[RMDB]
RNA sequence: GGGAACGACUCGAGUAGAGUCGAAAAGCCUUACGAUUCGUCGUAAGGCAUACAAAGUUUUGGCACUAUGAGGCCGCAGCGUUGGUGCUCCCACGCGGUGCAAUACGACGGAUUUCGAUCCGUCGAAGCAUUUAGACAUAUUCGUAUGUCUAAAUGCAAAAGAAACAACAACAACAAC
Reactivity to 2A3 in 0.01 (KOAc 150mM, MgCl2 10mM, bicine 150mM(pH8.5), 24C), signal-to-noise 9, nucleotides 027 to 126: g000c000c000u000u000a000c010g010a010u020u070c200g040u000c000g000u130a000a000g000g000c000a000u040a010c020a000a110a040g020u040u070u180u200g040g000c020a010c050u150a150u300g080a270g140g000c020c020g000c020a010g010c020g050u140u200g040g010u090g040c020u060c010c000c000a020c030g010c020g010g040u040g040c020a040a070u110a150c020g000a000c000g000g000a000u050u050u090c140g040a010u000c000c000g000u000c000g000a010a010
Reactivity to DMS in 0.01 (KOAc 150mM, MgCl2 10mM, bicine 150mM(pH8.5), 24C), signal-to-noise 9, nucleotides 027 to 126: g010c000c000u000u000a000c000g000a020u000u010c210g030u000c000g010u000a000a010g000g010c000a000u000a030c140a090a080a120g010u000u000u010u000g010g010c010a030c040u010a100u010g010a120g000g000c020c030g010c040a090g000c050g010u000u000g020g010u010g000c110u010c030c010c020a100c090g010c040g000g010u000g010c080a090a080u010a170c010g000a010c000g000g000a020u000u010u010c170g010a030u000c000c000g000u000c000g010a030a090